[RMDB]
RNA sequence: GGGAACGACUCGAGUAGAGUCGAAAACACAGCACGCGGUAGCAGAGGUGCUGCGAUACGCUGUGUAGUAUCAUAUCACAGUUCUUUGCUACCUCGUGCUUCGCAAAAAUCAUAGCUUCGGCUAUGACGAAUAUGGACACUUCGGUGUCCAUAUUCGAAAAGAAACAACAACAACAAC
Reactivity to DMS in 0.01 (KOAc 150mM, MgCl2 10mM, bicine 150mM(pH8.5), 24C), signal-to-noise 2, nucleotides 027 to 126: c110a180c200a020g010c040a010c020g000c160g010g000u000a010g020c000a020g020a030g030g010u010g010c000u000g000c060g030a010u000a040c130g040c090u000g000u000g000u000a100g010u000a090u000c070a080u000a030u000c050a070c010a000g000u000u000c030u000u000u000g010c020u000a010c000c000u000c000g040u010g010c000u000u000c050g000c120a010a070a060a090a120u000c010a010u010a060g000c000u020u000c170g030g000c000u000a000u000g010a020
Reactivity to 2A3 in 0.01 (KOAc 150mM, MgCl2 10mM, bicine 150mM(pH8.5), 24C), signal-to-noise 2, nucleotides 027 to 126: c040a010c030a010g000c010a020c000g010c020g010g000u010a000g000c010a000g000a010g080g040u160g060c000u010g010c030g000a000u010a010c040g010c120u120g090u100g040u300a040g010u020a030u100c060a030u070a030u130c030a000c000a060g000u070u050c000u020u000u000g010c010u010a000c000c000u000c000g010u010g000c030u010u010c010g020c010a000a030a040a010a040u040c000a000u000a000g000c000u060u030c280g100g000c000u000a000u000g010a010